[RMDB]
RNA sequence: GGGAACGACUCGAGUAGAGUCGAAAAUUACCUCCCUUCGGGGAGGUAAACUGAACGCUCCAAGCGGCAGCGCGCUCGCUUGCGCACACACGCACAAUAAAAGCAGUAUGCACUUCGGUGCAUACAAAGGUGUUGAUAUGUUCGCAUAUCAACACCUAAAAGAAACAACAACAACAAC
Reactivity to 2A3 in 0.01 (KOAc 150mM, MgCl2 10mM, bicine 150mM(pH8.5), 24C), signal-to-noise 2, nucleotides 027 to 126: u010u010a010c000c000u000c000c000c000u020u020c260g040g010g000g000a060g000g000u020a000a000a010c000u000g050a090a010c050g020c040u000c040c040a040a020g000c020g050g000c040a040g070c050g010c020g000c070u060c030g060c050u040u080g010c010g000c010a020c000a000c000a010c060g040c020a020c050a130a130u120a170a120a020a000g020c020a030g020u000a000u000g000c010a000c030u020u060c260g070g010u000g000c000a000u000a000c000a010a030
Reactivity to DMS in 0.01 (KOAc 150mM, MgCl2 10mM, bicine 150mM(pH8.5), 24C), signal-to-noise 2, nucleotides 027 to 126: u000u000a000c000c000u000c000c000c000u000u000c150g010g050g010g020a000g030g000u000a000a010a070c070u000g000a080a120c080g050c010u000c070c050a100a090g010c010g010g040c040a100g010c130g010c080g000c020u000c140g030c040u010u010g000c160g020c050a020c180a040c090a070c040g030c050a070c150a090a090u010a060a090a070a050g000c130a140g040u000a010u000g000c000a000c000u000u000c240g010g000u000g000c010a000u000a000c010a040a050
Source: RMDB library M2PK50, as collected in RNAgym.
Structure probing data (2A3 and DMS) for a 177-nucleotide construct.
2A3 adducts were read by reverse transcription with SuperScript II with manganese.
For DMS the reverse transcriptase was MarathonRT.
The RNA was probed in 150 mM KOAc, 10 mM MgCl2 and 150 mM bicine (pH 8.5) at 24 C.